[RMDB]
RNA sequence: GGGAACGACUCGAGUAGAGUCGAAAACACUUCGGACAACACCGUAUUCGAGGUUAGGUCGAUACCUGGCCGCGGACCGGUGCCGGCGUCAAAAACGGGGACGGUUGGCCGGGCGCCGCCGGUACGGGUCUUAGCAUCGUUUCGACGAUGCUAAGACAAAAGAAACAACAACAACAAC
Reactivity to 2A3 in 0.01 (KOAc 150mM, MgCl2 10mM, bicine 150mM(pH8.5), 24C), signal-to-noise 2, nucleotides 027 to 126: c030a010c030u080u080c050g040g030a020c020a140a000c010a120c020c000g060u080a270u050u060c040g020a030g060g000u030u060a000g030g010u060c140g100a050u070a290c000c010u040g010g000c000c000g000c030g010g010a060c010c010g040g000u020g000c020c000g070g050c000g070u070c010a120a070a060a080a030c040g040g010g030g110a030c020g030g080u190u180g160g000c040c030g050g060g030c070g010c000c030g000c010c000g020g000u040a060c040g110g000
Reactivity to DMS in 0.01 (KOAc 150mM, MgCl2 10mM, bicine 150mM(pH8.5), 24C), signal-to-noise 2, nucleotides 027 to 126: c110a080c100u000u000c040g000g010a050c070a130a220c080a140c030c030g020u010a180u010u000c020g010a050g000g010u000u000a060g010g030u000c300g000a130u040a030c040c010u010g000g010c030c040g020c010g020g020a050c300c010g010g040u000g010c020c020g000g000c030g020u020c160a070a050a040a120a070c070g000g010g000g010a120c060g010g000u000u000g030g000c040c010g000g000g000c080g020c040c040g020c020c010g010g010u000a040c060g010g010

This 177-nucleotide RNA was probed chemically with 2A3 and DMS. For DMS the reverse transcriptase was MarathonRT. Values are in units of 0.01, from 0 to 300, in steps of 10. The 2A3 profile rests on 1,925 reads. The reactions ran in a buffer of 150 mM KOAc, 10 mM MgCl2 and 150 mM bicine (pH 8.5), at 24 C.